Annotation: Source: RMDB library OK2TST, as collected in RNAgym. An RNA of 177 nucleotides, treated with 2A3 and DMS and read out base by base. The DMS profile rests on 1,215 reads. 2A3 adducts were read by reverse transcription with SuperScript II with manganese.
RNA sequence: GGGAACGACUCGAGUAGAGUCGAAAAAUAAAGCUGGCGUCUAAGGUCAAAAUUGACAGAACAACAGUAUGAAUUAUGCGAAUUUUGGAUUAGACCUAUUCAAGUCAAUCACAGACGCUGCCUAUGAGAGUGGGUAUAUGUUCGCAUAUACCCACUCAAAAGAAACAACAACAACAAC
Reactivity to 2A3 in 0.01 (KOAc 150mM, MgCl2 10mM, bicine 150mM(pH8.5), 24C), signal-to-noise 1, nucleotides 027 to 126: a040u030a000a000a030g020c050u060g030g010c000g000u000c000u010a060a030g110g000u050c010a000a000a000a150u090u060g050a030c050a010g050a140a000c040a030a010c000a030g050u110a090u120g110a110a070u230u130a030u120g030c020g050a050a050u020u010u070u190g000g000a010u060u060a060g040a000c000c030u070a130u160u110c050a050a050g000u040c040a010a040u080c020a040c030a130g030a000c000g060c000u010g050c010c010u140a170u170g070a040
Reactivity to DMS in 0.01 (KOAc 150mM, MgCl2 10mM, bicine 150mM(pH8.5), 24C), signal-to-noise 2, nucleotides 027 to 126: a100u000a090a160a150g010c020u020g030g000c090g030u010c020u020a090a120g000g000u020c020a010a050a050a100u000u010g020a160c000a040g010a070a100c060a100a130c080a090g000u010a100u000g000a110a110u010u010a070u010g000c060g000a050a110u020u000u000u000g010g020a060u010u000a130g000a060c000c050u000a100u010u000c250a060a110g000u000c070a080a040u000c060a060c170a050g030a010c020g030c040u000g010c060c050u010a110u000g000a150